[RMDB]
RNA sequence: GGGAACGACUCGAGUAGAGUCGAAAAGGAGAAGAGAUCCAUGUCAUUGGUUCUUGUUGCCAAGGACUUUAUGACUUGGUUGCAAUCAUGACAUGUGCUGAAAUGAUAUCACAUAAGGCAGAAAAAAAUACAAGUUACCAGCAAAGAAGCCCAGGUACGUAUAUCAUGCUUUCGAGCAUGAUAUACGAAAAGAAACAACAACAACAAC
Reactivity to DMS in 0.01 (KOAc 150mM, MgCl2 10mM, bicine 150mM(pH8.5), 24C), signal-to-noise 3, nucleotides 027 to 156: g010g010a110g020a130a060g030a110g010a080u000c040c010a060u000g020u000c000a030u010u010g050g000u000u000c070u010u000g030u000u000g000c090c000a020a030g010g000a070c040u000u010u000a130u000g010a070c000u010u000g010g030u000u000g020c070a070a040u000c030a080u020g010a050c000a080u000g000u010g030c080u000g010a150a070a110u010g000a130u000a120u000c080a100c030a100u000a080a160g010g010c010a110g040a000a010a030a090a080a050a100u000a050c040a040a090g000u000u000a060c090c030a070g000c020a080a060a100g010a060a110g020c030c010c010a100g020g010u000a070
Reactivity to 2A3 in 0.01 (KOAc 150mM, MgCl2 10mM, bicine 150mM(pH8.5), 24C), signal-to-noise 6, nucleotides 027 to 156: g060g020a060g030a100a020g030a010g010a030u020c020c010a000u010g010u000c000a010u050u260g050g000u160u070c040u060u040g040u080u090g020c030c000a010a010g000g010a160c000u170u230u140a190u260g020a010c000u000u000g010g000u010u010g000c000a010a030u060c010a020u020g000a010c000a010u030g040u060g040c030u030g010a070a080a090u080g020a040u060a050u240c050a030c010a110u090a060a050g030g000c030a030g110a050a050a010a010a000a000a000u160a030c050a030a020g020u020u020a030c010c010a010g010c020a060a050a100g060a070a010g040c020c030c010a010g050g020u040a020